[RMDB]
RNA sequence: GGGAACGACUCGAGUAGAGUCGAAAAUGACGAUCGGUCAGGUGAAGGCGGCCCUGGCCGCGGAAGGAAUCACCGUGCGAUGACACUCGACCCAAAGAUCGCGGCGCGGUUGAAGCGUAAUGCCGACCCCUACUGACUCGUUCGCGAGUCAGUAGGGAAAAGAAACAACAACAACAAC
Reactivity to DMS in 0.01 (KOAc 150mM, MgCl2 10mM, bicine 150mM(pH8.5), 24C), signal-to-noise 1, nucleotides 027 to 126: u000g000a070c140g030a090u000c000g000g000u000c010a030g000g000u000g010a150a100g020g000c000g020g000c110c010c050u000g000g000c000c000g000c060g010g000a060a060g010g030a230a100u000c020a090c030c000g020u000g060c020g020a120u000g000a150c100a080c080u000c010g000a060c030c030c080a080a110a060g010a080u000c060g000c020g010g000c020g030c040g010g030u000u010g000a040a090g050c080g000u000a050a150u000g000c030c010g000a230c150
Reactivity to 2A3 in 0.01 (KOAc 150mM, MgCl2 10mM, bicine 150mM(pH8.5), 24C), signal-to-noise 1, nucleotides 027 to 126: u000g040a000c090g100a180u060c010g000g090u030c000a010g060g020u010g070a220a110g130g000c040g010g120c030c030c000u020g070g070c000c010g000c030g000g050a060a040g100g080a080a150u020c010a030c020c000g010u050g070c000g080a100u080g010a030c010a010c030u030c000g080a170c020c000c020a000a090a020g000a080u170c020g000c060g110g010c010g010c000g060g000u110u180g090a090a030g060c010g030u060a090a010u190g010c040c000g000a140c010